[RMDB]
RNA sequence: GGGAACGACUCGAGUAGAGUCGAAAACAAAAAAGGGGCAAUGGAUAGAACAAGGCCAAAAAAUAGCUCAAUUACUUAUUAUGCCAGUACAGCAUGAAAUAUUGGAACAAGGAAAAGUACAAAUGAAGUAUAAGCAAGUGUUCGCACUUGCUUAUACAAAAGAAACAACAACAACAAC
Reactivity to 2A3 in 0.01 (KOAc 150mM, MgCl2 10mM, bicine 150mM(pH8.5), 24C), signal-to-noise 1, nucleotides 027 to 126: c050a000a150a000a000a000a040g000g020g000g000c000a010a070u040g090g020a070u040a110g110a160a020c030a160a070g080g000c000c000a000a130a000a000a000a000u080a050g010c020u010c000a000a170u070u020a030c020u000u050a030u130u010a000u200g020c000c000a000g020u030a010c040a000g000c010a080u080g030a070a070a030u170a110u040u100g030g020a030a030c020a030a110g120g040a080a160a000a000g020u050a020c010a030a070a030u110g050a130a030
Reactivity to DMS in 0.01 (KOAc 150mM, MgCl2 10mM, bicine 150mM(pH8.5), 24C), signal-to-noise 2, nucleotides 027 to 126: c050a000a080a110a060a060a110g000g000g040g000c090a120a100u000g000g000a100u010a060g010a100a060c100a090a090g010g020c010c060a010a010a140a030a040a020u000a050g000c000u000c050a050a080u000u000a130c040u010u010a070u000u000a060u010g000c020c020a090g020u000a090c100a070g010c060a020u000g000a040a030a060u000a080u000u010g000g000a060a060c120a010a070g000g000a020a050a050a090g000u010a010c110a050a040a080u050g000a050a170
The record gives the reactivity of an RNA of 177 nucleotides to 2A3 and DMS. Values cover nucleotides 27 to 126. For DMS the reverse transcriptase was MarathonRT. Reactivities are rounded to 0.1 and cut off at 0 and 3. The DMS profile rests on 1,018 reads. The RNA was probed in 150 mM KOAc, 10 mM MgCl2 and 150 mM bicine (pH 8.5) at 24 C. The data come from the RNA Mapping Database (RMDB), library OK2TRN.